The record gives the reactivity of an RNA of 177 nucleotides to DMS and 2A3.
For DMS the reverse transcriptase was MarathonRT.
[RMDB]
RNA sequence: GGGAACGACUCGAGUAGAGUCGAAAACUUGUAUCAUCGCCAUGACGUAUACAAAUUGAUUUUUGUAAUUGAUGAUUACUCCAAUUACCAAUGAAUAAAUUGAUAUUGGUUUGUUCUAGAUGUGUGAGGUAACACUGUGAUUCGUCACAGUGUUACCAAAAGAAACAACAACAACAAC
Reactivity to DMS in 0.01 (KOAc 150mM, MgCl2 10mM, bicine 150mM(pH8.5), 24C), signal-to-noise 2, nucleotides 027 to 126: c040u000u000g020u000a000u000c050a020u000c010g000c200c170a060u000g000a080c110g030u000a120u010a020c020a010a020a040u000u000g020a110u000u010u000u010u000g000u010a030a120u000u000g010a050u000g010a040u020u010a060c080u000c100c020a010a010u010u000a020c030c020a020a030u000g000a090a110u000a080a030a040u000u000g000a040u000a090u000u010g010g010u000u000u000g000u000u000c080u000a150g000a070u000g020u000g020u000g000a170
Reactivity to 2A3 in 0.01 (KOAc 150mM, MgCl2 10mM, bicine 150mM(pH8.5), 24C), signal-to-noise 1, nucleotides 027 to 126: c000u040u080g060u040a090u030c040a030u000c000g040c140c020a080u150g050a090c090g080u080a030u000a110c000a030a030a000u090u110g080a170u020u100u060u060u030g050u030a130a040u110u150g020a020u030g010a010u110u080a050c030u050c080c000a040a050u010u000a030c000c010a000a030u040g020a080a110u190a220a140a020u080u040g020a050u070a030u160u020g110g000u100u080u180g020u000u090c040u010a120g040a290u150g160u050g010u030g160a030
It was measured as part of the RMDB library OK2TRN.
Values cover nucleotides 27 to 126.
Conditions: 150 mM KOAc, 10 mM MgCl2 and 150 mM bicine (pH 8.5), 24 C.